An RNA of 177 nucleotides, treated with DMS and 2A3 and read out base by base. 2A3 adducts were read by reverse transcription with SuperScript II with manganese. The DMS profile rests on 1,077 reads. It was measured as part of the RMDB library OK1LIB. The reactions ran in a buffer of 150 mM KOAc, 10 mM MgCl2 and 150 mM bicine (pH 8.5), at 24 C.

RNA sequence: GGGAACGACUCGAGUAGAGUCGAAAAAGUCGGUCGUACCCUGUGGCAGGCCAUCCAUAAUCAGCAGGCGGCAAGACUGACCAGCCAAAUCAAUGCCGUCGUACCGGUUAGCAAGAACGAUCGGACCCACUCAGUCGCGAUUCGUCGCGACUGAGUGAAAAGAAACAACAACAACAAC
Reactivity to DMS in 0.01 (KOAc 150mM, MgCl2 10mM, bicine 150mM(pH8.5), 24C), signal-to-noise 1, nucleotides 027 to 126: a080g000u000c020g000g010u000c010g030u000a070c040c040c000u000g010u030g000g000c000a040g000g050c100c100a020u030c080c070a050u000a050a050u000c020a100g010c130a070g040g010c000g000g020c090a040a300g000a150c070u020g000a010c060c050a140g020c000c040a180a280a300u000c000a020a100u000g000c060c000g030u020c000g000u080a120c090c210g000g000u000u010a050g000c150a180a030g000a070a000c000g020a030u020c060g000g000a060c000c050
Reactivity to 2A3 in 0.01 (KOAc 150mM, MgCl2 10mM, bicine 150mM(pH8.5), 24C), signal-to-noise 2, nucleotides 027 to 126: a000g120u080c030g030g090u020c050g010u130a110c000c000c010u040g000u000g030g130c030a070g010g100c020c020a000u010c000c000a000u050a230a140u090c090a010g050c000a000g020g000c010g000g000c040a020a020g110a030c030u050g010a030c000c000a000g040c000c020a100a000a020u130c090a000a090u100g000c000c000g050u110c030g000u010a060c000c000g000g000u020u030a050g040c100a120a040g000a060a070c050g000a010u050c000g070g050a040c000c000